[RMDB]
RNA sequence: GGGAACGACUCGAGUAGAGUCGAAAAACAUGAUGAAUGUUCUCACCUGAGUUAGAACCAAACCCAGCGCAGGCAGCUGCCCUGAGCUUUGUUAUUACAAUUUUGGCCUGACAUGCGAGUUGGAAAAUCAAGGUUAUCUGUUCGCAGAUAACCUUGAAAAAGAAACAACAACAACAAC
Reactivity to DMS in 0.01 (KOAc 150mM, MgCl2 10mM, bicine 150mM(pH8.5), 24C), signal-to-noise 3, nucleotides 027 to 126: a030c040a010u000g020a100u050g000a160a020u020g010u000u040c000u000c010a140c020c010u010g000a020g010u010u010a090g000a260a150c090c030a040a070a110c100c050c020a060g010c070g030c040a010g010g010c090a130g020c110u010g010c030c020c060u000g000a050g010c050u020u040u030g000u020u010a080u020u050a100c130a040a080u020u020u010u000g000g000c070c030u000g010a060c060a070u000g000c060g010a050g040u000u010g000g000a050a060a070a150
Reactivity to 2A3 in 0.01 (KOAc 150mM, MgCl2 10mM, bicine 150mM(pH8.5), 24C), signal-to-noise 3, nucleotides 027 to 126: a000c040a060u090g040a060u180g040a090a070u070g000u050u000c030u010c010a060c020c020u070g020a050g100u080u120a060g020a070a030c010c000a050a020a050c000c020c020a020g000c020g000c020a020g040g000c040a080g000c030u050g000c010c000c030u010g010a010g010c000u030u050u040g090u080u140a140u130u100a090c110a120a050u050u040u040u160g040g000c020c030u020g050a020c010a020u140g060c060g010a070g070u000u050g050g000a120a020a020a050
Overview
The data come from the RNA Mapping Database (RMDB), libraries RFM100 and RFMREP. This 177-nucleotide RNA was probed chemically with DMS and 2A3. High 2A3 reactivity points to a flexible backbone, as in loops and unpaired stretches. The 2A3 profile rests on 1,635 reads. The RNA was probed in 150 mM KOAc, 10 mM MgCl2 and 150 mM bicine (pH 8.5) at 24 C.